[RMDB]
RNA sequence: GGGAACGACUCGAGUAGAGUCGAAAAGCGCCGUGGUACGGCCUCGAUCUCGGCGCGAUCAGCACUGUGACGGUACUGCGAGUACGUGAGUACGGCGCGUAUCUGAUCGAUGGCCAUGCGCCUCAGCAAAGCAGUUAUUGUUCGCAAUAACUGCUUUAAAAGAAACAACAACAACAAC
Reactivity to DMS in 0.01 (KOAc 150mM, MgCl2 10mM, bicine 150mM(pH8.5), 24C), signal-to-noise 9, nucleotides 027 to 126: g010c080g010c010c050g030u010g010g020u010a130c110g010g000c020c010u000c040g010a020u000c020u000c050g000g010c020g010c010g000a090u000c140a090g020c060a040c050u000g010u010g010a280c270g000g000u000a010c000u010g020c050g010a300g010u000a000c010g010u010g000a150g020u000a010c000g000g010c010g020c000g000u000a030u010c020u000g000a050u000c020g000a050u010g020g000c010c030a100u000g010c040g000c020c010u000c070a100g000c130
Reactivity to 2A3 in 0.01 (KOAc 150mM, MgCl2 10mM, bicine 150mM(pH8.5), 24C), signal-to-noise 6, nucleotides 027 to 126: g050c030g010c020c030g100u110g050g050u130a100c060g040g010c010c020u010c020g040a040u000c030u010c060g020g000c010g000c030g010a160u130c050a010g070c010a000c060u100g040u170g190a060c080g070g000u030a000c020u130g050c030g040a040g020u020a020c030g060u090g050a030g000u010a020c030g070g080c000g060c010g010u020a040u040c030u040g000a010u000c010g030a120u210g020g000c000c000a010u100g010c080g000c000c020u060c020a070g040c090
Notes:
Chemical mapping of a 177-nucleotide RNA with DMS and 2A3. For DMS, 21,176 sequencing reads were counted. DMS (dimethyl sulfate) methylates the pairing face of unpaired adenines and cytosines. For DMS the reverse transcriptase was MarathonRT. It was measured as part of the RMDB library OK2TRN. The RNA was probed in 150 mM KOAc, 10 mM MgCl2 and 150 mM bicine (pH 8.5) at 24 C.